[RMDB]
RNA sequence: GGGAACGACUCGAGUAGAGUCGAAAAACAACUGCAGACAUUUCCAUUACAUGCCAUCACGCUCCAUCUUGCCUAUGCCUGUAAGUGCCCGGGUCGGUGAUGCCCGAUAGACUAAUAGAACUCACCCGCAAGGUUGAGACUUCGGUCUCAACCUUGCAAAAGAAACAACAACAACAAC
Reactivity to 2A3 in 0.01 (KOAc 150mM, MgCl2 10mM, bicine 150mM(pH8.5), 24C), signal-to-noise 2, nucleotides 027 to 126: a000c070a070a050c090u130g000c050a000g100a180c010a040u080u050u030c060c030a000u080u190a070c080a000u130g000c010c000a020u160c080a050c070g050c030u000c020c020a030u020c020u080u080g000c000c000u040a080u140g020c000c000u070g020u130a130a040g010u000g030c000c010c010g000g040g000u010c030g040g020u030g040a060u000g030c000c000c020g040a050u040a100g100a000c050u050a040a080u030a260g000a000a020c010u000c020a030c000c030c030